[RMDB]
RNA sequence: GGGAACGACUCGAGUAGAGUCGAAAAGAAAAGUUGUCUAGACGUUGACAGCGAAAAACGUCGAAGGAACCUGGGCUUGGUUCCGAAAGCCCGAACGAUCUAAAGUCAUGAUCGGAAUGACGAGAAAGGGUAAGUAUAACUUCGGUUAUACUUACCCAAAAGAAACAACAACAACAAC
Reactivity to DMS in 0.01 (KOAc 150mM, MgCl2 10mM, bicine 150mM(pH8.5), 24C), signal-to-noise 5, nucleotides 027 to 126: g010a070a090a090a110g000u000u010g010u000c050u010a120g000a040c120g010u020u000g010a090c090a120g030c110g020a040a050a070a080a060c010g010u000c000g010a140a170g000g000a040a040c030c040u020g010g030g010c060u030u000g020g000u020u010c010c010g000a030a040a100g020c010c000c010g010a050a100c050g000a030u000c010u000a040a100a090g000u030c150a080u010g010a040u000c020g020g030a080a040u020g000a020c020g000a160g000a120a120a130
Reactivity to 2A3 in 0.01 (KOAc 150mM, MgCl2 10mM, bicine 150mM(pH8.5), 24C), signal-to-noise 4, nucleotides 027 to 126: g080a000a120a000a000g040u060u060g010u040c020u060a100g030a140c090g110u080u070g010a000c020a030g030c060g100a120a030a030a000a000c020g010u010c010g010a070a020g020g020a010a000c010c090u060g010g130g030c100u080u060g010g010u060u000c020c000g000a020a010a000g010c000c000c000g010a030a040c000g020a010u030c030u190a150a040a050g130u150c050a110u140g010a020u010c010g000g000a060a020u110g020a010c010g010a010g230a100a090a080

Overview: An RNA of 177 nucleotides, treated with DMS and 2A3 and read out base by base. DMS adducts were read by reverse transcription with MarathonRT. 2A3 adducts were read by reverse transcription with SuperScript II with manganese. The data come from the RNA Mapping Database (RMDB), library OK1LIB. Conditions: 150 mM KOAc, 10 mM MgCl2 and 150 mM bicine (pH 8.5), 24 C.